RNA sequence: GGGAACGACUCGAGUAGAGUCGAAAAAGCUGGUAAAGAGGGGUGGAACGUCGGGUGGAAGCACUCCCAAGAAGAGCAGAGAGAAGGCAAGAAUCGGACGAUUUCCCCAUGACGCUGGAGACAUCCUAAAGCCCGAUGUUCGCAUCGGGCAAAAGAAACAACAACAACAAC
Reactivity to DMS in 0.01 (KOAc 150mM, MgCl2 10mM, bicine 150mM(pH8.5), 24C), signal-to-noise 2, nucleotides 027 to 129: a000g030c070u070g050g000u040a070a040a060g030a090g020g040g020g120u020g000g000a010a060c060g000u050c020g000g000g050u020g000g010a130a120g010c080a110c110u060c010c050c020a000a000g010a030a060g010a000g100c080a030g020a080g030a040g020a020a090g020g000c210a020a050g000a000a130u000c130g020g020a070c060g030a110u010u020u130c000c020c030c180a090u010g000a050c180g000c040u030g020g020a030g010a010c000a000u020c000c060u030a030a030a080
Reactivity to 2A3 in 0.01 (KOAc 150mM, MgCl2 10mM, bicine 150mM(pH8.5), 24C), signal-to-noise 2, nucleotides 027 to 129: a000g030c020u010g000g010u010a040a080a060g090a030g000g020g010g050u000g060g000a060a030c020g050u030c020g010g000g010u040g000g010a030a000g030c000a040c030u110c000c010c000a010a060g040a040a000g000a010g000c050a020g120a010g000a000g030a080a000g000g000c010a020a040g000a050a040u080c020g000g030a000c000g020a040u010u010u010c040c020c000c000a030u100g000a010c050g000c030u020g020g040a030g000a010c010a060u070c000c000u100a090a010a010